Structure probing data (DMS and 2A3) for a 177-nucleotide construct.
DMS (dimethyl sulfate) methylates the pairing face of unpaired adenines and cytosines.
2A3 adducts were read by reverse transcription with SuperScript II with manganese.
DMS adducts were read by reverse transcription with MarathonRT.
The RNA was probed in 150 mM KOAc, 10 mM MgCl2 and 150 mM bicine (pH 8.5) at 24 C.
[RMDB]
RNA sequence: GGGAACGACUCGAGUAGAGUCGAAAACCUAUAGUUUCUACUGCAAAACGUAUAAUUUAGUUCCCACAUAUACUAAAAAACGUGUCCUUAACUCUCUCUGUCAGAUUAGUUGUAGGUGGCUUAAACUAUGAGAAGAGUAGUUCGCUACUCUUCUCAUAAAAGAAACAACAACAACAAC
Reactivity to DMS in 0.01 (KOAc 150mM, MgCl2 10mM, bicine 150mM(pH8.5), 24C), signal-to-noise 2, nucleotides 027 to 126: c000c000u000a130u020a160g000u000u000u000c000u000a150c030u000g000c050a140a050a090a050c070g000u000a040u010a040a110u020u010u010a080g000u000u000c040c010c050a160c200a080u000a060u000a070c090u020a000a080a080a040a110a110c100g010u000g000u000c020c050u000u020a040a060c040u000c150u000c020u000c090u000g010u010c070a040g000a070u000u000a110g020u000u000g000u000a030g000g040u000g000g000c060u000u000a060a060a160c170u000
Reactivity to 2A3 in 0.01 (KOAc 150mM, MgCl2 10mM, bicine 150mM(pH8.5), 24C), signal-to-noise 1, nucleotides 027 to 126: c050c000u070a090u140a200g010u040u020u000c020u050a040c050u030g050c020a000a000a190a120c040g050u050a140u050a190a100u040u080u140a040g030u000u080c040c060c030a020c050a010u210a010u040a050c050u090a000a110a080a000a000a000c030g020u020g020u040c000c010u030u020a010a050c000u030c010u000c000u000c000u080g040u040c010a010g020a230u040u110a030g010u000u040g010u030a030g100g000u000g030g000c000u060u060a020a040a030c020u010